[RMDB]
RNA sequence: GGGAACGACUCGAGUAGAGUCGAAAAAUCUAACUCGGGCUCUAUGGGCCAGGGCCGGGUUCCAGCCUGGGUAUCUUCCUAAUAGGGUAAUAAAAAUGGGCCUAGGGAUACGGGUAAACACUACCCAAACUUAUACCUAUUUCGAUAGGUAUAAGUUAAAAGAAACAACAACAACAAC
Reactivity to DMS in 0.01 (KOAc 150mM, MgCl2 10mM, bicine 150mM(pH8.5), 24C), signal-to-noise 6, nucleotides 027 to 126: a060u010c060u010a080a060c010u000c010g030g010g020c030u000c170u020a070u010g010g010g000c030c030a070g010g000g000c050c040g020g010g010u000u010c060c090a100g000c010c010u000g000g000g010u000a030u010c080u000u000c010c010u000a080a090u010a140g010g010g010u010a070a060u020a030a060a060a080a090u000g020g010g020c020c020u000a050g010g010g000a120u010a060c180g020g000g010u000a040a110a110c190a080c140u010a040c010c000c000a060
Reactivity to 2A3 in 0.01 (KOAc 150mM, MgCl2 10mM, bicine 150mM(pH8.5), 24C), signal-to-noise 3, nucleotides 027 to 126: a010u020c020u030a020a030c010u010c040g160g090g000c010u010c040u100a160u240g030g040g010c040c040a020g030g040g010c040c030g050g010g000u130u000c030c000a020g040c000c010u030g000g030g000u030a050u030c050u080u050c000c000u070a160a110u090a150g130g010g000u080a080a050u120a100a250a030a030a040u090g090g010g020c010c000u010a040g000g020g010a040u080a160c080g000g030g030u030a100a230a020c100a050c100u050a040c000c000c000a010